[RMDB]
RNA sequence: GGGAACGACUCGAGUAGAGUCGAAAAGGAGGAUUCCGCUCCUUUGCGCUUUUUUUUCGGAUUAGGCGUGGAGGCGAAAGUCACCCUCCUCGCAUCGCAAGUUCGUGCUUGCGACUUACAUGUAGGGAAAAACCCAUUGACUUCGGUCAAUGGGUAAACAUACAAAAACCUUCGGGUUUUUGUAUGUAAAAGAAACAACAACAACAAC
Reactivity to DMS in 0.01 (KOAc 150mM, MgCl2 10mM, bicine 150mM(pH8.5), 24C), signal-to-noise 2, nucleotides 027 to 156: g010g000a050g030g000a190u000u010c030c030g000c000u000c010c000u000u000u000g030c020g030c010u000u000u000u000u000u000u000u000c220g050g000a070u010u000a040g010g020c020g030u000g010g040a010g010g000c090g020a050a070a040g000u010c080a140c070c000c000u000c010c010u000c050g000c170a060u000c030g010c000a010a030g010u000u000c180g030u000g010c030u000u010g010c000g020a030c050u010u000a120c080a080u010g020u000a070g010g000g020a040a040a040a110a080c000c000c000a020u010u000g010a030c010u000u010c300g050g000u000c000a020a000u000g010g020g000u000a000a000
Reactivity to 2A3 in 0.01 (KOAc 150mM, MgCl2 10mM, bicine 150mM(pH8.5), 24C), signal-to-noise 1, nucleotides 027 to 156: g000g030a000g020g000a120u020u000c030c030g000c090u090c000c000u000u000u030g050c050g000c100u070u000u020u010u030u020u020u100c070g130g010a030u100u040a010g010g000c000g010u020g000g040a000g020g000c050g060a150a060a010g060u080c050a020c030c010c010u000c000c020u020c010g070c030a010u000c010g000c010a020a020g020u100u300c170g190u300g080c000u020u000g000c000g010a010c010u070u130a010c010a050u100g080u140a060g000g040g000a050a050a000a050a000c000c000c000a000u010u000g000a000c000u020u080c170g070g020u010c000a000a000u030g000g020g000u000a010a000

Record summary
Chemical mapping of a 207-nucleotide RNA with DMS and 2A3. For 2A3 the reverse transcriptase was SuperScript II with manganese. The 2A3 profile rests on 684 reads. The DMS profile rests on 5,627 reads. Reactivities are rounded to 0.1 and cut off at 0 and 3. It was measured as part of the RMDB library M2RFPK.